[RMDB]
An RNA of 170 nucleotides, treated with DMS and 2A3 and read out base by base.
The DMS profile rests on 6,983 reads.
For 2A3 the reverse transcriptase was SuperScript II with manganese.
Conditions: 150 mM KOAc, 10 mM MgCl2 and 150 mM bicine (pH 8.5), 24 C.

RNA sequence: GGGAACGACUCGAGUAGAGUCGAAAAUCCCGAUCCGAGUGGUCCACGGCGUAUCAAGUUUGGAGUCAUCCGGCCGAAGGGUUGAGAUGACCCACAGUCGGGUGAUCCACCAGGAGGGUGGAGGAGAACAGUAGCGCCUUCGGGCGCUACAAAAGAAACAACAACAACAAC
Reactivity to DMS in 0.01 (KOAc 150mM, MgCl2 10mM, bicine 150mM(pH8.5), 24C), signal-to-noise 2, nucleotides 027 to 129: u000c040c000c000g000a070u090c000c000g020a170g060u030g000g000u040c020c030a110c170g000g000c060g060u000a190u010c060a070a120g000u070u000u040g020g040a150g010u010c000a050u010c010c000g010g040c010c030g040a220a100g050g000g010u000u000g030a190g060a090u080g020a010c010c010c030a030c130a120g010u020c040g020g000g060u020g000a000u030c000c000a080c000c020a050g000g000a080g060g020g040u000g000g010a050g030g020a130g000a020a110c040a040
Reactivity to 2A3 in 0.01 (KOAc 150mM, MgCl2 10mM, bicine 150mM(pH8.5), 24C), signal-to-noise 2, nucleotides 027 to 129: u000c000c000c030g000a050u010c060c010g000a010g030u030g020g060u000c000c000a040c090g070g000c040g000u060a060u140c090a010a090g010u030u060u050g110g000a130g060u000c000a000u000c000c000g000g000c010c000g060a200a100g040g010g000u010u030g050a080g010a050u170g000a020c000c000c000a020c010a000g040u020c010g000g050g000u050g000a020u040c000c000a010c050c020a030g100g010a030g020g010g070u050g010g000a040g020g020a010g040a090a000c000a020